[RMDB]
RNA sequence: GGGAACGACUCGAGUAGAGUCGAAAAGCUGAGCGGUGAGCUGUGCCUGCAAUUGCGGCUGCUGUCCAUAACCACUGUAAACAAGGCGCUCGGAAUCGAUGUGGCCGGAUUGGGGAGGCGCCUGUGCGCUCUCCGUAAGCUUCGGCUUACGGAGAGCAAAAGAAACAACAACAACAAC
Reactivity to 2A3 in 0.01 (KOAc 150mM, MgCl2 10mM, bicine 150mM(pH8.5), 24C), signal-to-noise 2, nucleotides 027 to 126: g020c040u070g010a010g010c020g020g070u080g040a010g000c030u030g060u080g050c030c000u010g000c040a070a290u170u170g040c030g000g000c000u010g000c000u030g050u120c030c010a060u060a060a010c020c010a040c020u120g070u230a170a070a000c050a080a070g030g010c040g000c000u030c060g030g040a060a050u060c040g040a060u100g010u040g030g000c000c020g050g000a090u090u100g020g000g020g030a010g040g020c020g040c000c000u030g000u020g040c060
Reactivity to DMS in 0.01 (KOAc 150mM, MgCl2 10mM, bicine 150mM(pH8.5), 24C), signal-to-noise 3, nucleotides 027 to 126: g010c060u000g000a190g020c030g010g010u010g020a070g030c010u020g010u010g000c030c010u010g010c080a130a100u010u010g010c040g000g000c020u000g020c050u010g000u020c030c050a070u010a070a160c040c020a070c100u000g000u010a090a070a130c100a100a030g020g010c030g000c020u000c030g020g010a060a080u010c060g010a110u000g010u000g000g020c010c030g010g010a090u000u000g010g010g010g020a150g000g010c030g020c020c070u000g020u010g020c130